[RMDB]
RNA sequence: GGGAACGACUCGAGUAGAGUCGAAAAGUGAAAGCUCCUUCUCUCGCAAUGUGUAACUCAUGAUUCUCAUGACCCCUGGUUGGAGAGAUCCGGACUAGGAGCCAGGGGGCCUCUGAUUCGGCCAGCCAAAACUGUCGUAAGUUCGCUUACGACAGAAACAUUCGGUUUCGUUCGCGAAACCGAAUGUAAAAGAAACAACAACAACAAC
Reactivity to 2A3 in 0.01 (KOAc 150mM, MgCl2 10mM, bicine 150mM(pH8.5), 24C), signal-to-noise 1, nucleotides 027 to 156: g060u070g100a110a060a030g020c040u050c000c020u050u020c030u000c010u010c010g140c140a090a080u120g090u040g000u160a060a050c040u030c040a010u040g050a140u240u020c040u030c030a030u140g030a100c000c000c000c000u010g020g030u030u090g070g000a080g000a000g010a050u070c050c060g040g050a010c090u120a060g010g010a010g010c000c000a010g010g010g000g000g000c000c000u000c000u110g070a160u050u040c010g010g000c070c020a020g000c040c060a050a110a160a080c000u020g000u000c000g000u000a000a000g000u030u100c230g000c160u010u000a000c000g000a000c000a000g020a010a040
The record gives the reactivity of an RNA of 207 nucleotides to 2A3. Reactivities are given for positions 27 through 156. Conditions: 150 mM KOAc, 10 mM MgCl2 and 150 mM bicine (pH 8.5), 24 C.